[RMDB]
RNA sequence: GGGAACGACUCGAGUAGAGUCGAAAAUUGCGCCUCCGAUUCGCCGUCGGCAUUUCCCCAGCAGCCAUGACCUACCAGGCUGCGGUGCGGCUCGCCACACAGGUCAUCCCUCAUCGGGCGCGUCCUGGAUAGGGCUAUACUUUCGAGUAUAGCCCAAUGACAAUUUAACGUUCGCGUUAAAUUGUCAAAAAGAAACAACAACAACAAC
Reactivity to 2A3 in 0.01 (KOAc 150mM, MgCl2 10mM, bicine 150mM(pH8.5), 24C), signal-to-noise 2, nucleotides 027 to 156: u100u050g020c000g000c000c000u120c060c000g060a120u190u110c030g010c070c080g050u010c060g010g020c030a030u040u050u090c000c030c000c000a050g020c000a000g010c000c030a200u160g040a110c030c060u160a140c150c030a060g000g000c000u010g000c010g000g000u090g000c030g010g000c030u030c010g090c040c020a080c000a020c000a060g000g020u100c010a100u140c070c000c020u080c000a060u110c090g020g000g010c040g000c040g000u070c010c000u000g050g000a080u130a170g030g000g000c010u000a000u020a000c010u010u060u190c170g060a000g000u000a000u000a020g000c000c020c000a000a000
Reactivity to DMS in 0.01 (KOAc 150mM, MgCl2 10mM, bicine 150mM(pH8.5), 24C), signal-to-noise 2, nucleotides 027 to 156: u000u020g000c060g040c040c020u000c030c080g000a110u010u000c100g000c050c090g000u000c000g040g040c110a170u000u010u000c030c000c020c040a110g000c040a030g010c010c020a160u020g000a080c060c070u000a120c070c030a160g020g000c010u010g010c030g010g040u010g010c070g020g000c030u010c180g000c020c040a040c060a050c020a030g000g010u010c030a170u000c020c010c000u010c150a090u000c050g000g020g030c020g010c010g000u010c010c010u000g000g000a220u000a070g020g030g050c010u000a010u000a010c000u010u000u000c300g010a040g020u000a000u010a020g000c000c000c000a010a010